[RMDB]
RNA sequence: GGGAACGACUCGAGUAGAGUCGAAAAGAUAUGGAAGUACAGAGCUUUGAUCGUACUGGGUCGGAAACGACCUUACGGGAGCUCGUACUUCCUAAGUCAAAGAACAAGCUGCUUCGGCAGCUUGUUCGUCCAUCCUACCCUUCGGGGUAGGAUGGACAAAAGAAACAACAACAACAAC
Reactivity to 2A3 in 0.01 (KOAc 150mM, MgCl2 10mM, bicine 150mM(pH8.5), 24C), signal-to-noise 1, nucleotides 027 to 126: g020a000u010a010u060g020g010a000a000g010u010a040c230a270g010a040g000c000u300u300u100g010a010u000c010g000u000a020c150u060g010g040g020u000c000g000g000a000a010a000c010g010a000c030c000u000u000a000c000g010g000g000a000g000c000u000c000g000u010a000c000u010u000c000c000u000a000a000g000u000c030a130a110a250g010a000a000c010a010a000g010c000u000g000c000u060u170c300g140g000c000a000g010c010u000u010g000u000u010c000
Reactivity to DMS in 0.01 (KOAc 150mM, MgCl2 10mM, bicine 150mM(pH8.5), 24C), signal-to-noise 1, nucleotides 027 to 126: g000a020u010a000u010g000g020a020a030g010u010a010c000a110g000a020g020c000u000u000u040g000a040u010c000g000u000a020c300u000g000g020g030u000c020g010g020a010a010a030c010g010a010c000c000u000u000a000c000g010g000g010a000g060c000u000c000g020u000a000c000u000u020c020c000u000a020a080g000u010c010a120a160a240g020a000a020c000a030a010g000c000u000g000c000u000u000c300g020g030c010a000g010c000u000u000g000u000u000c010